[RMDB]
RNA sequence: GGGAACGACUCGAGUAGAGUCGAAAAGCGUACUACACAACUUGGAUUUACCCAAGGGAGCCUAAUUGAGUAAAUAUCCCAAAUAGGAUAUUGAAAUAUUAGGCUUUGAUCUUGGGUUGUCAGUUGUGUAUCGCAAACGAUCUGUUCGCAGAUCGAAUCAUUACACCGUCUUCGGACGGUGUAAUGAAAAAGAAACAACAACAACAAC
Reactivity to 2A3 in 0.01 (KOAc 150mM, MgCl2 10mM, bicine 150mM(pH8.5), 24C), signal-to-noise 1, nucleotides 027 to 156: g000c060g060u080a110c030u010a000c060a000c000a000a000c000u060u200g160g010a040u300u290u090a000c000c000c010a000a000g000g020g020a010g000c000c000u000a010a000u010u010g000a000g000u000a000a000a000u000a000u040c000c040c060a200a250a120u200a170g000g000a000u000a000u000u000g010a000a000a000u070a000u000u000a000g000g000c000u000u030u000g000a000u020c000u000u000g000g010g000u000u000g000u000c000a010g000u020u010g020u020g000u000a020u080c000g060c000a100a000a000c000g000a000u000c030u010g040u100u110c300g080c110a000g000a000u000c000g010a020a070
Reactivity to DMS in 0.01 (KOAc 150mM, MgCl2 10mM, bicine 150mM(pH8.5), 24C), signal-to-noise 1, nucleotides 027 to 156: g000c010g020u010a090c070u010a010c030a000c000a000a000c000u000u000g000g010a060u000u000u000a040c010c000c000a040a020g040g000g000a010g030c010c010u010a010a000u000u010g050a140g000u020a070a040a000u010a010u010c000c000c000a060a100a270u010a060g010g020a010u000a000u000u010g010a180a160a300u010a030u010u000a000g020g040c000u010u000u020g000a050u010c010u000u010g010g010g030u020u000g000u010c020a020g020u000u000g000u000g000u000a000u000c000g050c030a070a070a190c020g010a010u030c000u010g010u000u000c300g090c030a030g010a000u000c000g010a150a110
Source information: The record gives the reactivity of an RNA of 207 nucleotides to 2A3 and DMS. For 2A3, 926 sequencing reads were counted. For DMS the reverse transcriptase was MarathonRT.